[RMDB]
Structure probing data (2A3) for a 207-nucleotide construct. Conditions: 150 mM KOAc, 10 mM MgCl2 and 150 mM bicine (pH 8.5), 24 C.

RNA sequence: GGGAACGACUCGAGUAGAGUCGAAAAUCGUUGCCGGGCAACGACGCUUUCCUGCGGUUGCUGCGCGACGGUCGUUUCGAAGUGUACGACACCUACGUGGUGCCGGAGCUGCGUCUGCAGACACCGGGGCAGAUCGUCGCCUGUCUGGCGCUGCUGGCGCUAGCUGCAAAUUCGUUUGCAGCUAGCGAAAAGAAACAACAACAACAAC
Reactivity to 2A3 in 0.01 (KOAc 150mM, MgCl2 10mM, bicine 150mM(pH8.5), 24C), signal-to-noise 2, nucleotides 027 to 156: u090c010g040u020u090g000c080c190g200g120g020c000a030a020c000g040a030c010g050c100u040u070u080c030c030u030g060c020g090g020u150u300g060c020u030g000c030g010c000g060a010c020g020g020u000c000g000u010u020u040c070g020a210a100g060u090g030u220a060c010g010a010c000a010c000c000u100a160c250g210u300g000g000u010g000c020c000g010g020a060g040c030u020g000c000g160u150c170u270g000c010a000g010a050c000a050c030c010g000g000g000g030c040a050g000a020u030c000g000u020c020g020c010c000u000g030u020c070u090g020g000c000g000c020u030g010c040u080g020g030